Structure probing data (2A3 and DMS) for a 177-nucleotide construct.
Conditions: 150 mM KOAc, 10 mM MgCl2 and 150 mM bicine (pH 8.5), 24 C.
As a SHAPE reagent, 2A3 marks flexible, mostly unpaired nucleotides at the ribose 2'-OH.
Values are in units of 0.01, from 0 to 300, in steps of 10.
RNA sequence: GGGAACGACUCGAGUAGAGUCGAAAAGUUAGUUGGUAGUGUAAUGGACUACCAAGACAGUGACGGUUGACGGGAAAUUAGGGUUUUGUACCGGAGAGGGAGCCUGAGAGAUUGCUCCCACGUCCAAGUAAUUUCGGAUAUUCGUAUCCGAAAUUACAAAAGAAACAACAACAACAAC
Reactivity to 2A3 in 0.01 (KOAc 150mM, MgCl2 10mM, bicine 150mM(pH8.5), 24C), signal-to-noise 5, nucleotides 027 to 126: g070u070u080a010g000u000u010g000g000u000a000g000u000g040u070a070a110u070g030g020a010c000u000a000c010c000a000a000g020a010c010a030g050u030g120a010c010g050g040u060u070g050a030c000g020g000g050a060a090a100u110u100a130g180g030g010u040u040u050u100g050u090a060c010c030g010g010a060g020a070g000g010g000a000g000c020c010u120g030a070g010a010g020a090u060u180g000c000u000c010c000c010a010c020g000u000c030c000a110a010
Reactivity to DMS in 0.01 (KOAc 150mM, MgCl2 10mM, bicine 150mM(pH8.5), 24C), signal-to-noise 6, nucleotides 027 to 126: g000u010u010a100g010u010u000g000g010u000a000g010u010g020u020a130a090u060g000g000a040c000u000a000c010c000a020a030g000a040c040a080g000u020g010a080c070g000g010u010u020g000a100c070g000g000g000a100a060a080u030u030a130g010g000g000u010u000u040u010g020u020a120c060c040g010g000a160g020a170g000g000g010a010g010c010c130u000g000a170g000a120g000a170u030u000g000c020u000c000c000c000a030c060g010u000c010c050a060a150